[RMDB]
RNA sequence: GGGAACGACUCGAGUAGAGUCGAAAAGAUAUGGAAUCCGACAUGGGAGCUUUCGGGUCGGAAACGACCUUCGAGCUUUGAUCAUGGGAUUCCUAAGUCAAAACGUGAUUCCUUCGGGAAUCACGAACUUGUACAUCAGCUUCGGCUGAUGUACAAGAAAAGAAACAACAACAACAAC
Reactivity to DMS in 0.01 (KOAc 150mM, MgCl2 10mM, bicine 150mM(pH8.5), 24C), signal-to-noise 1, nucleotides 027 to 126: g020a020u010a080u010g000g000a020a010u010c000c000g030a300c140a020u000g010g020g030a010g010c000u000u000u000c260g000g010g010u010c010g020g010a050a030a030c000g020a050c020c000u000u000c110g000a010g010c010u000u010u020g020a060u000c030a000u000g010g010g000a020u000u000c000c000u000a000a030g000u000c020a090a070a160a290c010g020u000g000a050u000u000c000c000u000u050c220g000g000g000a020a010u000c010a000c000g020a010a070
The data come from the RNA Mapping Database (RMDB), library TTRDES.
The record gives the reactivity of an RNA of 177 nucleotides to DMS.
DMS adducts were read by reverse transcription with MarathonRT.
Values cover nucleotides 27 to 126.